[RMDB]
Source information: The data come from the RNA Mapping Database (RMDB), library OK1LIB. This 177-nucleotide RNA was probed chemically with DMS and 2A3. As a SHAPE reagent, 2A3 marks flexible, mostly unpaired nucleotides at the ribose 2'-OH. The RNA was probed in 150 mM KOAc, 10 mM MgCl2 and 150 mM bicine (pH 8.5) at 24 C.
RNA sequence: GGGAACGACUCGAGUAGAGUCGAAAAGAAAACCUGAUCAGGGAAGAUCGAUAAAGAGACCGAUGCGUCUCGAAGCAUCGUCAAUAAAAGAGCCGUGGUGGAAGGCUCCACUCACCAAUAAAGAAAAGGGAUAAGAUUACUUCGGUAAUCUUAUCCCAAAAGAAACAACAACAACAAC
Reactivity to DMS in 0.01 (KOAc 150mM, MgCl2 10mM, bicine 150mM(pH8.5), 24C), signal-to-noise 2, nucleotides 027 to 126: g010a050a110a060a100c080c030u020g000a070u050c000a100g000g040g000a210a000g000a080u030c040g000a040u000a040a090a040g010a020g000a020c170c030g060a000u030g000c040g040u030c090u000c090g010a080a130g040c070a000u000c000g000u020c060a150a050u000a050a100a040a040g090a100g000c080c080g020u000g020g020u000g000g000a030a070g000g010c030u010c000c040a020c020u030c000a100c060c080a130a060u050a070a090a240g000a020a050a060a140
Reactivity to 2A3 in 0.01 (KOAc 150mM, MgCl2 10mM, bicine 150mM(pH8.5), 24C), signal-to-noise 1, nucleotides 027 to 126: g040a010a080a000a010c010c020u120g000a040u040c050a040g050g000g040a050a030g050a040u020c030g000a000u080a010a160a050g110a000g030a000c000c060g130a040u090g000c120g120u020c020u010c100g020a070a000g020c000a000u030c000g040u000c040a050a060u230a250a110a000a000g080a060g000c000c110g010u010g020g000u000g020g030a000a000g040g000c010u040c000c030a020c000u040c050a100c000c010a090a120u200a040a090a000g140a070a030a000a000